An RNA of 207 nucleotides, treated with 2A3 and DMS and read out base by base. For 2A3, 2,572 sequencing reads were counted.
RNA sequence: GGGAACGACUCGAGUAGAGUCGAAAAAGAUUUGAUCUGAAGCAUUCAAAUAGGAAAUGAAUGCUCAGAGGAAGCUUCAAAUUUCUUUCUACUUGAAGAAGCUGAAUUGCAGAAGCUAUCUCUGUCCUGUUAAUCACCGGGUCCACAGUGAAACCAAUAAUAUCAUACGAUUCGUCGUAUGAUAUUAAAAAGAAACAACAACAACAAC
Reactivity to 2A3 in 0.01 (KOAc 150mM, MgCl2 10mM, bicine 150mM(pH8.5), 24C), signal-to-noise 5, nucleotides 027 to 156: a010g060a040u140u160u210g030a040u040c010u020g050a080a010g010c000a010u010u000c010a030a100a180u200a270g110g030a080a070a060u050g000a000a000u000g000c010u000c000a000g000a010g010g010a040a000g000c000u000u010c020a060a090a130u040u050u000c010u020u100u010c030u090a230c080u130u190g070a140a050g010a030a020g070c080u040g060a080a050u120u090g020c050a020g010a040a010g010c020u030a040u150c020u000c020u030g060u020c000c000u030g040u080u120a080a070u080c030a010c050c020g050g010g020u020c030c000a030c020a060g040u050g080a080a060a060c010c030a020a020
Reactivity to DMS in 0.01 (KOAc 150mM, MgCl2 10mM, bicine 150mM(pH8.5), 24C), signal-to-noise 3, nucleotides 027 to 156: a030g000a050u010u000u000g000a130u020c000u000g010a130a070g010c000a030u010u000c000a010a050a150u000a170g000g010a110a120a250u010g010a030a010u000g010c000u010c020a020g010a070g010g010a120a110g010c040u000u010c010a040a070a140u000u010u000c050u020u000u000c010u000a040c050u000u000g000a170a150g000a070a050g010c020u010g020a030a070u000u010g020c080a170g010a120a300g020c030u000a080u000c010u000c030u000g000u000c030c030u000g020u000u000a070a110u000c040a090c030c040g010g030g010u000c040c070a060c070a040g020u000g010a120a080a140c020c020a030a240